[RMDB]
RNA sequence: GGGAACGACUCGAGUAGAGUCGAAAAGGCAUUCAAAUUCAGGCUAGUUUGAUAAUGAACUCUGAAUUUUCCCCACUGUAAGGAUGCAUACAGUAAGAAAAAUCCAGGGUUUGGGGAUAUGCUGGGUUUCACAUGUGCCCUUCUUAUCUCAACCAGCUAUCCUCCUCUUGUUCGCAAGAGGAGGAUAAAAAGAAACAACAACAACAAC
Reactivity to 2A3 in 0.01 (KOAc 150mM, MgCl2 10mM, bicine 150mM(pH8.5), 24C), signal-to-noise 2, nucleotides 027 to 156: g060g010c020a020u010u040c030a060a060a000u010u040c040a020g060g090c050u210a060g030u000u050u040g210a230u230a300a190u220g020a010a000c030u000c000u050g010a030a020u040u000u000u000c000c000c000c010a090c010u030g020u100a030a060g000g030a030u090g040c010a030u090a030c070a020g130u140a110a100g050a030a100a060a050a010u030c100c070a100g030g000g000u040u150u130g060g000g000g000a010u010a000u040g000c020u040g000g000g030u010u300u190c140a110c050a090u300g040u060g110c000c000c000u020u040c000u060u070a030u020c000u000c030a010a020c010c000a000g020c000